About this RNA
This 207-nucleotide RNA was probed chemically with 2A3 and DMS. For 2A3, 690 sequencing reads were counted. Values are in units of 0.01, from 0 to 300, in steps of 10. The RNA was probed in 150 mM KOAc, 10 mM MgCl2 and 150 mM bicine (pH 8.5) at 24 C. 2A3 adducts were read by reverse transcription with SuperScript II with manganese.
[RMDB]
RNA sequence: GGGAACGACUCGAGUAGAGUCGAAAAGGAAAUAAUCAUCUGGAGCACAAUAUUUAGGAUCAUAUUUAGCAACAAGAAUAACGGGCUUUGGUGCAUCAAGUAGCAAAGCAAAAGAGCAGAAGCGGGAAGAUAAGACCAAUAAGUUAAAUAAGUAUCCUCCUUCUGUGAUUUUCGAAUCACAGAAGGAAAAAGAAACAACAACAACAAC
Reactivity to 2A3 in 0.01 (KOAc 150mM, MgCl2 10mM, bicine 150mM(pH8.5), 24C), signal-to-noise 1, nucleotides 027 to 156: g050g020a080a000a040u090a070a080u170c030a010u070c020u080g100g000a000g000c030a020c010a060a000u060a100u130u210u190a080g010g010a030u080c030a030u050a080u070u130u100a020g020c020a010a040c020a110a050g140a090a050u120a120a000c030g020g000g010c060u030u030u000g050g000u000g070c000a000u020c030a190a000g020u020a060g080c040a070a060a000g000c000a000a000a050a080g030a050g000c030a000g000a050a000g080c120g050g000g000a000a000g020a050u070a080a000g010a010c010c010a010a030u020a010a000g030u060u030a080a020a030u070a100a100g090u010a000u000c000c000
Reactivity to DMS in 0.01 (KOAc 150mM, MgCl2 10mM, bicine 150mM(pH8.5), 24C), signal-to-noise 1, nucleotides 027 to 156: g000g000a040a060a060u000a090a080u000c030a060u000c030u000g040g010a120g030c040a110c090a020a030u040a100u020u010u000a090g010g010a060u010c020a090u010a100u010u000u000a060g000c000a040a100c040a080a090g000a130a050u020a040a070c060g020g040g050c010u000u010u000g000g030u000g000c000a130u010c040a090a140g030u000a120g050c020a000a040a070g010c000a050a030a120a030g010a090g010c010a060g040a010a000g030c130g000g000g020a060a030g020a130u020a050a050g020a060c040c020a010a130u000a090a100g020u000u000a040a030a000u030a000a160g000u000a140u000c090c100